[RMDB]
The data come from the RNA Mapping Database (RMDB), library VIROID. The record gives the reactivity of an RNA of 207 nucleotides to 2A3. High 2A3 reactivity points to a flexible backbone, as in loops and unpaired stretches. The RNA was probed in 150 mM KOAc, 10 mM MgCl2 and 150 mM bicine (pH 8.5) at 24 C. The 2A3 profile rests on 451 reads.
RNA sequence: GGGAACGACUCGAGUAGAGUCGAAAAGGGCGCCGCGGAUCACUGGCGUCCAGCACCGGAAACAGGAGCUCGUCUCCUUCCUUUCCACCGCUGGCUCCACAUCCGAUCGUCGCUUCUUCCUUCGCGACCUGAGAUAGAAACUACCUGGUGGAUACAAGGCUUCAUCACACUUCGGUGUGAUGAAGCCAAAAGAAACAACAACAACAAC
Reactivity to 2A3 in 0.01 (KOAc 150mM, MgCl2 10mM, bicine 150mM(pH8.5), 24C), signal-to-noise 1, nucleotides 027 to 156: g040g010g000c000g010c000c000g030c000g000g000a000u020c000a000c010u040g000g010c040g010u080c000c000a010g000c000a010c010c120g100g000a190a120a100c300a250g010g040a010g000c070u180c300g300u140c120u000c000c000u000u030c000c000u000u060u040c000c000a000c000c200g030c000u000g020g000c000u000c070c040a040c030a030u020c010c000g020a300u050c000g000u000c000g060c070u160u040c000u030u030c000c000u040u070c070g060c070g020a040c040c000u050g020a040g010a100u110a070g130a120a110a180c040u030a070c040c040u050g030g000u090g000g050a000u010a080c110a150a030